[RMDB]
RNA sequence: GGGAACGACUCGAGUAGAGUCGAAAAUGGCUGCACCGACGCUGCUGUACGUGAUACUGCAACCGCGUCUGCUUCGCCCGCUAACGGGCUCGCCGCUGUUCAUCGCCUUCCUCGCCUUCAGCAGCUAACUACUACGGAUGUUCGCAUCCGUAGUAGUAAAAGAAACAACAACAACAAC
Reactivity to 2A3 in 0.01 (KOAc 150mM, MgCl2 10mM, bicine 150mM(pH8.5), 24C), signal-to-noise 3, nucleotides 027 to 126: u100g020g010c000u010g000c030a030c030c060g060a040c050g000c030u040g000c020u020g010u060a040c040g050u060g060a110u060a220c050u050g030c010a010a030c010c020g010c000g000u000c020u020g030c000u100u120c040g020c000c010c010g000c040u090a190a090c070g000g000g000c010u000c010g020c010c010g000c020u050g040u030u040c040a070u050c050g010c010c000u030u030c010c000u020c020g040c010c020u060u070c010a040g000c010a000g040c030u020a060
Reactivity to DMS in 0.01 (KOAc 150mM, MgCl2 10mM, bicine 150mM(pH8.5), 24C), signal-to-noise 5, nucleotides 027 to 126: u010g010g020c010u000g000c020a150c120c080g010a050c050g020c020u010g010c040u000g030u000a030c100g010u010g010a150u010a100c140u000g000c060a040a070c070c070g010c020g000u010c040u010g000c070u000u000c160g000c030c000c020g000c140u010a120a120c080g000g000g010c030u000c160g020c020c050g010c040u000g020u000u000c060a060u000c070g010c040c030u000u000c020c010u000c060g010c040c020u000u010c060a090g020c020a050g000c060u010a080
This 177-nucleotide RNA was probed chemically with 2A3 and DMS. It was measured as part of the RMDB library OK2TST. The DMS profile rests on 6,396 reads. Reactivities are given for positions 27 through 126. The RNA was probed in 150 mM KOAc, 10 mM MgCl2 and 150 mM bicine (pH 8.5) at 24 C.